[RMDB]
RNA sequence: GGGAACGACUCGAGUAGAGUCGAAAAGUUGUGACAGGUAAUGUUGUAAAACAGUGUUGCACUGCUGCUGUUGAUUUAAGUAUGGAUAAGUUGCGCCGUGUGGAUUGGAAAUCAACCCUACGGUUGUGUACAUUCCGUUUCGACGGAAUGAAAAGAAACAACAACAACAAC
Reactivity to DMS in 0.01 (KOAc 150mM, MgCl2 10mM, bicine 150mM(pH8.5), 24C), signal-to-noise 8, nucleotides 027 to 129: g000u020u030g000u040g000a020c060a000g010g000u000a070a080u030g030u020u000g000u040a060a060a060a130c060a020g030u000g020u020u010g030c050a070c080u010g010c050u000g010c020u020g010u000u000g000a130u030u030u020a080a110g020u000a080u040g020g030a150u030a040a130g020u000u000g010c090g000c080c020g030u000g000u020g040g010a090u000u000g030g020a120a080a130u010c040a000a000c030c000c010u010a020c030g020g010u000u000g050u010g010u030a110
Reactivity to 2A3 in 0.01 (KOAc 150mM, MgCl2 10mM, bicine 150mM(pH8.5), 24C), signal-to-noise 5, nucleotides 027 to 129: g070u060u030g000u010g040a040c000a050g000g060u100a100a070u080g020u040u000g050u110a000a020a090a010c080a030g040u080g050u190u110g020c060a080c120u030g020c010u030g000c030u000g000u140u070g060a190u020u110u170a120a070g040u060a140u160g100g030a110u040a140a080g060u150u080g070c010g030c000c000g030u060g020u050g010g020a130u010u000g020g030a060a110a120u190c000a000a000c010c000c000u010a040c010g000g000u060u110g040u000g010u040a030
Chemical mapping of a 170-nucleotide RNA with DMS and 2A3. The RNA was probed in 150 mM KOAc, 10 mM MgCl2 and 150 mM bicine (pH 8.5) at 24 C. For DMS, 63,542 sequencing reads were counted. 2A3 adducts were read by reverse transcription with SuperScript II with manganese.